[RMDB]
RNA sequence: GGGAACGACUCGAGUAGAGUCGAAAAUAAACACCUCGAAUGAGGUGGAGAAUCGUGCAGAUAAGAGGCUCGACAGCUGCACGAUAAAGCGAGCCUACAAAGGUCGAGGAAAACUCGACCCCAAAAACGUGAUCGUCGUGUUCGCACGAUGAUCACGAAAAGAAACAACAACAACAAC
Reactivity to 2A3 in 0.01 (KOAc 150mM, MgCl2 10mM, bicine 150mM(pH8.5), 24C), signal-to-noise 3, nucleotides 027 to 126: u130a010a060a000c000a000c000c020u010c040g210a270a170u300g000a000g000g000u040g040g000a130g090a010a030u010c010g000u010g000c020a010g020a080u250a250a120g070a130g060g000c020u010c030g130a120c090a090g020c010u000g000c000a000c000g000a000u010a010a000a000g070c000g010a000g000c000c000u050a060c040a020a160a000g010g020u010c000g010a000g020g040a020a140a050a070c010u000c000g000a000c000c000c000c010a030a100a010a010a000
Reactivity to DMS in 0.01 (KOAc 150mM, MgCl2 10mM, bicine 150mM(pH8.5), 24C), signal-to-noise 2, nucleotides 027 to 126: u000a040a070a130c010a000c000c000u000c000g000a120a070u030g000a030g000g000u000g020g020a070g000a110a030u000c000g000u000g000c020a010g000a120u020a050a080g020a140g000g000c000u000c000g020a300c160a120g000c000u000g000c010a010c010g020a010u000a040a020a120g000c000g010a010g000c020c000u000a090c210a090a060a160g010g000u000c000g000a010g060g000a180a040a160a120c000u000c010g000a010c000c000c080c020a000a010a020a020a090